[RMDB]
RNA sequence: GGGAACGACUCGAGUAGAGUCGAAAAGAGAGAAAUACCGCGCGGAAUCAGAGAAAGGACUGUAAGGACGCGAAAUCCUUUCCGUCAUUUACCGCAAGAAAGAGCGAUGUGUGACGAAUAGAGAGAGCGCUGAUUUACUAUUCGUAGUAAAUCAGCGAAAAGAAACAACAACAACAAC
Reactivity to 2A3 in 0.01 (KOAc 150mM, MgCl2 10mM, bicine 150mM(pH8.5), 24C), signal-to-noise 6, nucleotides 027 to 126: g120a000g020a000g050a020a060a040u160a100c040c020g000c000g000c010g080g100a060a130u160c030a060g020a010g050a100a040a020g070g010a010c010u010g020u100a040a060g110g010a040c040g020c030g070a040a030a030u010c000c000u000u010u000c010c000g000u000c000a000u030u040u110a080c000c000g010c040a000a040g140a050a080a000g140a010g000c030g030a040u110g050u000g010u030g060a010c010g030a050a010u090a070g090a010g030a000g010a010g040
Reactivity to DMS in 0.01 (KOAc 150mM, MgCl2 10mM, bicine 150mM(pH8.5), 24C), signal-to-noise 4, nucleotides 027 to 126: g020a090g000a100g010a050a060a090u000a060c050c020g000c160g000c020g020g000a170a060u020c060a080g010a100g010a020a050a040g000g020a030c030u000g000u010a090a080g000g000a090c070g040c150g000a040a070a230u000c000c000u000u010u000c040c030g000u000c010a030u020u020u000a060c050c020g000c030a080a090g010a080a090a070g010a110g010c000g000a060u000g010u000g010u020g000a020c010g020a060a010u020a040g000a080g010a090g000a080g000